An RNA of 207 nucleotides, treated with 2A3 and DMS and read out base by base. Reactivities are given for positions 27 through 156. For DMS the reverse transcriptase was MarathonRT. For 2A3, 2,160 sequencing reads were counted. For DMS, 2,067 sequencing reads were counted.
[RMDB]
RNA sequence: GGGAACGACUCGAGUAGAGUCGAAAAUAGGCAGCCACACAGCUGGGAUGGGAAGUUGGCCUCAGUGAGCAGAUGGUACAGGGGCUGAGCUUAAAACAAAAAUCACAAACAUUUCUUGGGGGGUAUCCUCAAGGCCGAUAACCCUCUUACUAGAGUGCGUAUGAACUAAGUUCGCUUAGUUCAUACGAAAAGAAACAACAACAACAAC
Reactivity to 2A3 in 0.01 (KOAc 150mM, MgCl2 10mM, bicine 150mM(pH8.5), 24C), signal-to-noise 3, nucleotides 027 to 156: u080a010g060g010c010a010g000c020c020a050c010a010c030a040g010c010u040g000g000g040a050u030g040g010g030a040a040g050u100u060g020g000c010c000u060c020a040g030u050g050a020g010c030a020g030a110u090g020g030u100a040c030a040g010g000g040g000c040u040g000a020g000c010u080u130a040a050a040a020c100a020a140a020a040a050u130c040a060c030a080a130a020c010a100u110u160u070c070u020u050g000g010g000g000g000g030u060a020u030c010c000u030c050a010a020g020g000c030c010g000a020u040a060a080c000c010c000u000c010u050u050a070c050u050a030g030a020g080u040g020
Reactivity to DMS in 0.01 (KOAc 150mM, MgCl2 10mM, bicine 150mM(pH8.5), 24C), signal-to-noise 1, nucleotides 027 to 156: u000a010g010g020c020a070g030c000c050a150c060a080c070a140g040c040u000g000g020g040a090u010g010g050g000a070a180g020u000u000g000g000c030c010u070c060a050g020u000g000a050g010c030a180g010a000u000g020g020u010a040c030a180g120g020g000g000c040u000g000a060g000c010u000u000a120a060a050a180c090a020a030a040a070a090u010c030a090c050a050a050a090c040a170u010u010u000c050u000u000g000g000g000g000g000g000u010a000u000c010c030u000c080a060a050g030g040c090c040g000a110u000a050a120c010c010c010u000c030u000u000a050c060u000a070g000a140g010u000g010